[RMDB]
Structure probing data (DMS and 2A3) for a 177-nucleotide construct.
RNA sequence: GGGAACGACUCGAGUAGAGUCGAAAAGUCUCCCGAUUCGUCGGGAGACCGAGAAAUUCAGGUGAUUUGCUACCUUUAAGUGCAGCUUGAAAUUCAAAGGAAACACCAUGGCGUUCGCGCCAUGGAAUCCGAGAUGAAAGUUCGCUUUCAUCUCGGAAAAAGAAACAACAACAACAAC
Reactivity to DMS in 0.01 (KOAc 150mM, MgCl2 10mM, bicine 150mM(pH8.5), 24C), signal-to-noise 1, nucleotides 027 to 126: g020u000c000u000c000c000c000g000a040u000u020c220g010u000c000g000g020g010a000g000a010c000c060g010a120g000a110a030a090u020u000c030a000g010g010u000g000a190u020u000u020g010c000u000a010c030c040u010u000u000a070a080g020u000g000c010a050g000c100u020u000g010a040a000a050u000u020c000a070a120a110g010g000a090a030a030c160a160c010c000a000u000g010g040c000g010u010u000c230g010c000g030c020c000a000u000g000g040a020a020
Reactivity to 2A3 in 0.01 (KOAc 150mM, MgCl2 10mM, bicine 150mM(pH8.5), 24C), signal-to-noise 1, nucleotides 027 to 126: g020u020c000u020c000c000c010g010a010u030u060c160g000u000c000g110g000g000a020g000a000c000c000g000a000g010a040a070a010u100u070c060a000g020g010u010g090a190u090u070u190g010c040u050a020c000c000u170u130u190a110a020g020u050g020c000a000g020c020u000u040g050a020a100a100u070u070c020a040a000a070g100g040a150a080a010c020a020c030c000a000u000g000g030c030g030u070u080c200g010c000g010c010c000a020u000g010g010a000a000
DMS adducts were read by reverse transcription with MarathonRT. High DMS reactivity at an A or C suggests that its Watson-Crick edge is free. For 2A3, 1,207 sequencing reads were counted. Values cover nucleotides 27 to 126. As a SHAPE reagent, 2A3 marks flexible, mostly unpaired nucleotides at the ribose 2'-OH. The reactions ran in a buffer of 150 mM KOAc, 10 mM MgCl2 and 150 mM bicine (pH 8.5), at 24 C.